Chemical mapping of a 177-nucleotide RNA with DMS and 2A3. It was measured as part of the RMDB library OK1LIB. For 2A3, 8,217 sequencing reads were counted. For 2A3 the reverse transcriptase was SuperScript II with manganese. The RNA was probed in 150 mM KOAc, 10 mM MgCl2 and 150 mM bicine (pH 8.5) at 24 C.
[RMDB]
RNA sequence: GGGAACGACUCGAGUAGAGUCGAAAAAACUCGGAUUUAUUAUAGUUUUUCCAUCUUUUAUCCUACCUAUAGCAUGCUCAAUAUGAAUUGCUAGAGCCAAGUACAGACCUUGAUUUACAUGCUUAAACCUCACCAUACUAUUCGUAGUAUGGUGAGGAAAAGAAACAACAACAACAAC
Reactivity to DMS in 0.01 (KOAc 150mM, MgCl2 10mM, bicine 150mM(pH8.5), 24C), signal-to-noise 2, nucleotides 027 to 126: a080a010c030u010c070g000g020a080u020u000u040a040u040u030a110u000a100g020u000u000u000u000u060c040c010a030u020c070u000u000u000u000a070u050c050c040u000a030c090c050u030a060u000a050g000c030a040u010g020c150u040c050a040a090u050a060u010g030a070a100u000u000g000c020u030a050g000a090g000c090c020a020a050g010u000a040c050a070g000a100c130c060u000u010g010a120u000u020u020a030c090a060u000g000c010u000u030a030a100a060
Reactivity to 2A3 in 0.01 (KOAc 150mM, MgCl2 10mM, bicine 150mM(pH8.5), 24C), signal-to-noise 8, nucleotides 027 to 126: a000a000c080u090c070g030g020a050u070u080u050a100u180u160a130u170a140g030u030u020u000u010u030c010c010a060u070c070u000u120u080u050a050u050c000c020u030a120c020c020u110a070u070a110g010c050a030u080g050c010u040c080a070a070u140a060u230g130a170a100u150u080g030c020u040a060g010a010g050c020c020a060a000g020u070a120c040a050g070a100c010c020u040u070g020a040u050u080u100a070c060a050u090g020c010u040u080a110a060a050